RNA sequence: GGGAACGACUCGAGUAGAGUCGAAAAAUAUUUUCUCUGUGAUCCUUAUAAUUAACUGAUGAAAUACACCAGACAGGUAGUAGCAUACCCCAUUUUUCACGGUGUGAAUUUGAGGCUUAGAGAAAUUAGUUGAUGUAUCCAGUAUCACUUGCCUAGAAGGUAUAUUAGGAUUCGUCCUAAUAUACCUAAAAGAAACAACAACAACAAC
Reactivity to DMS in 0.01 (KOAc 150mM, MgCl2 10mM, bicine 150mM(pH8.5), 24C), signal-to-noise 4, nucleotides 027 to 156: a150u010a020u000u000u010u000c020u010c010u000g010u010g010a080u010c030c010u010u010a060u000a040a080u000u030a090a090c020u000g010a110u000g000a080a080a110u000a120c060a090c060c030a160g010a150c160a120g010g020u000a040g020u000a150g040c090a170u000a030c010c010c010c010a120u000u000u000u000u000c040a030c030g050g010u000g010u010g040a030a020u000u000u000g020a030g000g010c040u000u000a060g010a090g010a060a040a060u000u000a100g010u000u000g010a060u000g000u000a080u000c050c030a150g020u010a110u000c030a050c050u000u000g010c030c010u000a070g020a220
Reactivity to 2A3 in 0.01 (KOAc 150mM, MgCl2 10mM, bicine 150mM(pH8.5), 24C), signal-to-noise 3, nucleotides 027 to 156: a000u070a070u000u040u010u010c040u000c010u010g030u020g080a170u150c010c010u090u090a100u080a210a040u090u060a050a040c010u030g040a070u040g040a250a040a020u100a010c050a060c030c060a040g110a190c030a060g030g040u020a040g020u030a020g060c040a040u030a070c000c000c000c040a060u040u030u010u040u040c040a020c060g030g020u070g020u030g090a020a030u040u000u030g010a010g010g010c030u050u140a010g020a000g000a020a050a020u040u050a030g030u050u060g020a030u020g030u060a090u040c090c060a010g030u030a030u040c020a030c040u030u060g080c010c010u050a130g000a150
An RNA of 207 nucleotides, treated with DMS and 2A3 and read out base by base. The DMS profile rests on 8,431 reads. The 2A3 profile rests on 1,852 reads. The reactions ran in a buffer of 150 mM KOAc, 10 mM MgCl2 and 150 mM bicine (pH 8.5), at 24 C.